[RMDB]
RNA sequence: GGGAACGACUCGAGUAGAGUCGAAAAGUAAGCUCUCACGUGGUUCCAUGAAACUUGCUUUGGUUUCCAUGUGUAUUAAUGUGCAGCUAGGUCAUCAUGUAUAUGCUUCUUUCUGUGGGUUGCAGUUUAAACAAUUUGAGGCUGGGCUCAGUGGCUCAAGGCAGGAUAUAUUCGUAUAUCCUGCCUUAAAAGAAACAACAACAACAAC
Reactivity to 2A3 in 0.01 (KOAc 150mM, MgCl2 10mM, bicine 150mM(pH8.5), 24C), signal-to-noise 2, nucleotides 027 to 156: g030u050a090a000g020c010u030c040u030c030a010c010g050u020g030g020u020u010c000c010a010u060g100a070a110a070c120u170u160g050c030u050u060u050g020g020u030u030u030c000c000a010u010g040u010g020u020a080u130u080a170a100u200g050u050g020c040a010g000c030u060a010g010g030u000c000a070u020c020a000u070g100u070a020u030a020u150g040c030u060u050c030u010u060u010c020u050g060u070g030g040g040u050u030g030c000a020g000u010u070u140a130a030a020c050a090a110u140u040u080g030a030g010g020c010u030g000g050g040c020u000c070a040g040u060g100g000c020u050c040
Reactivity to DMS in 0.01 (KOAc 150mM, MgCl2 10mM, bicine 150mM(pH8.5), 24C), signal-to-noise 3, nucleotides 027 to 156: g030u010a050a050g020c020u010c100u000c010a080c050g020u010g020g010u000u010c050c060a060u010g000a220a050a060c050u010u000g020c060u000u010u000g010g020u010u000u000c030c030a120u000g030u010g020u000a090u000u000a090a070u000g030u000g040c060a060g000c040u000a100g040g000u010c050a070u010c060a090u000g020u000a140u000a060u010g010c010u010u000c020u000u000u000c050u000g030u000g020g030g030u000u010g040c060a100g020u000u000u010a080a030a120c050a060a130u000u000u000g010a110g020g030c020u010g000g010g020c020u000c040a080g020u000g000g000c050u010c060